RNA sequence: GGGAACGACUCGAGUAGAGUCGAAAACGGGCGUCGGCACAGUGGUGCCCCCGGCCUUGGCCGGAUCGGCCCCGCCGGCGAUUGACCACGCCGGCCGAGGCGCUAGUCACCCGCCGCAAACCGGUCGCGCACCCAACCAAUUCGUUGGUUGGGUGCGAAAAGAAACAACAACAACAAC
Reactivity to 2A3 in 0.01 (KOAc 150mM, MgCl2 10mM, bicine 150mM(pH8.5), 24C), signal-to-noise 1, nucleotides 027 to 126: c000g010g000g040c000g060u030c020g030g010c060a060c020a100g230u160g100g000u030g020c000c000c020c050c010g000g040c030c050u180u200g180g030c000c030g000g010a040u130c050g020g000c000c000c100c000g000c000c010g000g040c010g020a010u020u100g050a040c010c010a060c000g000c000c000g040g000c000c010g000a090g050g010c020g000c140u050a060g060u020c030a030c040c010c010g010c010c020g010c120a000a220a000c090c000g020g030u060c030g000